RNA sequence: GGGAACGACUCGAGUAGAGUCGAAAACGUGCCUCCACAGAAUACGUUUCGCGAUAGAAGCGGGGAAGAAGCGGAAGAAAUGCGUGAUUUGCGUUACCGCGCGGGAAGCCAUAUGCACCUAAAUCGCAAGAGGCGCUUGGAAGAUAGCGAUUUUGAGACGAUGGAAUGAAUUCGUUCAUUCCAUCGUAAAAGAAACAACAACAACAAC
Reactivity to 2A3 in 0.01 (KOAc 150mM, MgCl2 10mM, bicine 150mM(pH8.5), 24C), signal-to-noise 5, nucleotides 027 to 156: c030g020u010g030c010c000u060c040c020a090c040a060g140a120a010u120a110c070g020u010u020u040c060g020c060g050a070u060a210g040a080a000g030c010g000g000g030g000a050a050g020a070a020g050c030g020g060a080a050g060a060a110a020u140g010c030g030u040g180a300u070u140u300g030c020g010u010u040a060c030c020g000c010g000c020g030g000g030a040a050g030c010c000a080u130a040u230g050c010a070c020c000u060a090a090a030u070c030g000c030a030a050g000a020g030g010c000g020c030u020u060g030g030a010a040g030a040u120a010g040c050g020a030u110u050u030u170g090a080g010
Reactivity to DMS in 0.01 (KOAc 150mM, MgCl2 10mM, bicine 150mM(pH8.5), 24C), signal-to-noise 2, nucleotides 027 to 156: c070g050u000g000c040c010u020c040c040a270c020a150g010a120a080u000a040c060g030u000u000u000c020g020c120g020a210u010a230g010a050a050g020c050g010g000g000g010a110a110g000a060a090g040c000g010g030a110a090g010a090a080a070u010g030c000g020u030g020a130u000u000u000g030c030g040u010u000a090c050c020g020c090g030c070g020g010g010a080a080g060c030c040a090u000a100u000g000c050a130c020c010u000a060a040a110u020c080g000c060a080a100g010a100g040g000c010g000c040u000u000g000g040a080a150g000a180u000a100g000c040g000a210u000u000u000u000g000a250g000